Structure probing data (2A3) for a 207-nucleotide construct. The 2A3 profile rests on 670 reads. The reactions ran in a buffer of 150 mM KOAc, 10 mM MgCl2 and 150 mM bicine (pH 8.5), at 24 C.
RNA sequence: GGGAACGACUCGAGUAGAGUCGAAAAGAAAGAAAGAACCCUUCCCGCGGGGCUGGAUCUUCCAGAUGGUGCGGGCCGGGACAAGCCGGAGAGUGUCCCGGUUUCAGAAACAACCUUCGUCAGCCAAACUAGACUACCCACUUCGGUGGGUAGUCAACUAAGAGGAAUCGUUCGCGAUUCCUCUUAGAAAAGAAACAACAACAACAAC
Reactivity to 2A3 in 0.01 (KOAc 150mM, MgCl2 10mM, bicine 150mM(pH8.5), 24C), signal-to-noise 1, nucleotides 027 to 156: g020a020a020a000g040a060a100a060g020a090a120c000c010c000u000u000c000c010c000g000c000g000g000g000g010c000u010g010g000a170u140c090u160u040c140c010a010g000a000u020g030g210u070g010c000g000g000g000c000c000g030g000g010a000c000a010a000g080c080c020g100g010a020g000a020g030u010g000u000c010c000c020g000g030u010u070u090c030a010g040a000a000a030c010a000a050c020c020u030u010c020g050u090c050a050g100c050c000a110a080a070c080u090a090g010a020c010u000a000c000c010c020a000c000u030u030c090g050g000u010g000g000g000u000a000g000u000c000a010a000